Overview
An RNA of 177 nucleotides, treated with DMS and 2A3 and read out base by base. It was measured as part of the RMDB library OK2TST. The reactions ran in a buffer of 150 mM KOAc, 10 mM MgCl2 and 150 mM bicine (pH 8.5), at 24 C. DMS adducts were read by reverse transcription with MarathonRT.

[RMDB]
RNA sequence: GGGAACGACUCGAGUAGAGUCGAAAAUCGAUCUGCUCCAUGGCAUUAUCCGCAGUUGGAAUGAAAAAAAUGGGUUGAACGUCUUGGCGAAAGUGGACGGUUCGCCGAACGGCAUGUGCCUUGGGCAUGAGCUACCAUAUUUCGAUAUGGUAGCUCAAAAAGAAACAACAACAACAAC
Reactivity to DMS in 0.01 (KOAc 150mM, MgCl2 10mM, bicine 150mM(pH8.5), 24C), signal-to-noise 4, nucleotides 027 to 126: u000c060g000a120u010c130u010g000c010u010c010c030a020u010g000g010c000a030u000u000a120u000c040c030g010c100a090g020u000u000g020g020a120a070u010g000a010a010a030a070a070a080a130u010g010g000g000u000u000g020a060a080c020g010u000c040u000u000g030g020c030g010a050a060a080g020u010g020g010a040c070g010g000u000u000c000g000c010c000g000a040a040c050g010g000c120a080u010g030u010g000c000c010u000u000g020g000g000c010a100
Reactivity to 2A3 in 0.01 (KOAc 150mM, MgCl2 10mM, bicine 150mM(pH8.5), 24C), signal-to-noise 3, nucleotides 027 to 126: u070c020g020a020u010c010u080g010c020u000c030c010a020u000g010g000c010a010u050u080a030u140c030c010g020c060a020g030u160u170g110g100a160a160u080g150a100a080a050a020a000a020a120u120g050g060g000u050u300g020a040a010c010g010u010c030u060u170g140g000c040g020a080a030a030g090u080g070g010a020c030g030g120u010u000c020g000c000c000g000a030a020c010g010g010c020a020u040g000u000g010c000c000u000u020g020g000g000c010a030